[RMDB]
RNA sequence: GGGAACGACUCGAGUAGAGUCGAAAAGAGCCUGCUACAAGCACUUGGCUUUUAGCGCCGAGUCUUCUAAGCGCUGAAGAGUGGAUUAUUCUGGCUCAGUCUCGUUCAAACGGAGUGCGAGCGCGCGCACGAUCAUAGUCUUCGGACUAUGAUCGUGAAAAGAAACAACAACAACAAC
Reactivity to DMS in 0.01 (KOAc 150mM, MgCl2 10mM, bicine 150mM(pH8.5), 24C), signal-to-noise 4, nucleotides 027 to 126: g000a030g000c010c010u000g010c110u010a060c150a100a100g030c070a070c090u000u000g000g000c060u000u000u020u000a070g010c090g020c020c070g000a090g010u000c060u000u000c050u000a140a160g000c000g000c030u000g020a020a060g000a030g020u000g000g010a100u000u020a100u000u000c030u000g010g000c010u000c010a110g000u010c010u000c020g010u000u010c130a070a090a160c140g000g020a070g010u000g010c040g000a070g010c080g020c080g010c100g010
Reactivity to 2A3 in 0.01 (KOAc 150mM, MgCl2 10mM, bicine 150mM(pH8.5), 24C), signal-to-noise 2, nucleotides 027 to 126: g030a010g040c000c040u060g020c030u050a060c060a200a000g060c060a070c110u090u060g040g000c000u090u050u070u150a090g020c020g020c000c000g030a020g060u000c040u070u040c020u150a120a090g000c000g030c010u010g050a060a020g000a020g070u080g060g040a070u080u060a090u300u110c030u060g040g000c000u000c010a020g030u000c020u000c020g060u130u060c050a140a120a090c080g100g040a110g030u030g010c010g020a010g040c080g010c020g050c010g000
An RNA of 177 nucleotides, treated with DMS and 2A3 and read out base by base. Conditions: 150 mM KOAc, 10 mM MgCl2 and 150 mM bicine (pH 8.5), 24 C. Reactivities are given for positions 27 through 126.